This 177-nucleotide RNA was probed chemically with DMS and 2A3. Source: RMDB libraries RFM100 and RFMREP, as collected in RNAgym. The reactions ran in a buffer of 150 mM KOAc, 10 mM MgCl2 and 150 mM bicine (pH 8.5), at 24 C. 2A3 is a SHAPE reagent: it acylates the 2'-hydroxyl of flexible nucleotides of all four kinds.
[RMDB]
RNA sequence: GGGAACGACUCGAGUAGAGUCGAAAAGUUUUUCGAGUUUCAGUCCUUCUCACACACCUCACUAACACUAACUACAGAUUUCUAGAUGUUAGUAGGCGUUGUGGGAAGGGCGGAGAUGACGAAUACAGAAAUUGACUAAAUUCGUUUAGUCAAUUUCAAAAGAAACAACAACAACAAC
Reactivity to DMS in 0.01 (KOAc 150mM, MgCl2 10mM, bicine 150mM(pH8.5), 24C), signal-to-noise 9, nucleotides 027 to 126: g010u010u000u010u000u000c000g020a300g000u000u000u000c010a040g000u000c000c000u000u000c000u000c000a000c000a010c000a050c000c000u000c240a000c000u000a000a010c010a020c010u010a030a140c190u010a170c290a140g010a120u010u030u020c150u000a020g000a140u000g000u000u000a000g000u000a010g000g010c000g010u020u020g020u000g000g000g010a000a010g000g000g010c000g000g000a010g000a010u000g000a160c110g000a020a020u010a040c060a120
Reactivity to 2A3 in 0.01 (KOAc 150mM, MgCl2 10mM, bicine 150mM(pH8.5), 24C), signal-to-noise 9, nucleotides 027 to 126: g020u090u040u000u020u040c010g000a010g010u000u000u000c000a000g000u000c000c000u000u000c000u000c000a000c000a000c000a010c010c000u040c030a040c010u000a010a000c000a000c010u020a110a020c030u170a100c100a140g140a300u090u200u060c030u030a040g030a200u010g000u000u000a000g000u000a000g010g000c010g090u190u090g000u010g000g010g000a000a000g000g000g000c000g000g000a010g000a000u110g100a140c010g010a010a010u050a040c050a020